[RMDB]
RNA sequence: GGGAACGACUCGAGUAGAGUCGAAAAAUCGCAUUCGUGCGAUAGGAUUCCUAAGUCCAGUACGACGAAGCGUACUAUUAUCAACAGCUAUCGGAAACGAUAGACAUGAUAACGUACGCAGAGUACUGGAUAUGGACACAAGAACGUUCGCGUUCAACUUAUAGAACUGCUUCGGCAGUUCUAUAAGAAAAGAAACAACAACAACAAC
Reactivity to 2A3 in 0.01 (KOAc 150mM, MgCl2 10mM, bicine 150mM(pH8.5), 24C), signal-to-noise 4, nucleotides 027 to 156: a010u020c010g000c020a030u050u090c260g140u070g020c010g000a000u020a060g170g060a140u110u030c000c010u020a130a000g020u000c000c010a010g010u000a010c030g140a040c040g050a290a000g010c010g010u000a000c040u040a180u100u010a000u010c020a010a110c020a150g050c020u000a000u000c000g060g000a130a030a070c020g010a010u000a000g040a080c010a070u070g000a010u000a010a020c010g000u000a010c020g000c010a000g010a000g000u000a000c010u000g000g000a000u000a000u030g010g020a020c010a010c040a250a100g050a050a000c030g030u140u140c280g030c040g150u010u020c050a040a030
Reactivity to DMS in 0.01 (KOAc 150mM, MgCl2 10mM, bicine 150mM(pH8.5), 24C), signal-to-noise 4, nucleotides 027 to 156: a060u020c000g050c010a090u000u000c300g030u010g020c010g000a020u010a040g010g000a210u010u000c000c010u000a110a250g010u000c000c000a020g020u000a010c000g010a300c100g010a170a180g020c010g010u000a010c000u010a070u000u000a010u000c010a060a170c110a240g020c000u000a010u000c010g010g000a150a110a300c000g020a040u010a000g000a020c050a300u000g010a030u010a000a000c300g030u000a000c010g050c010a100g010a140g020u000a000c000u010g010g020a010u000a020u010g000g000a090c140a140c100a070a070g000a020a030c020g010u010u010c120g020c100g010u000u000c000a130a290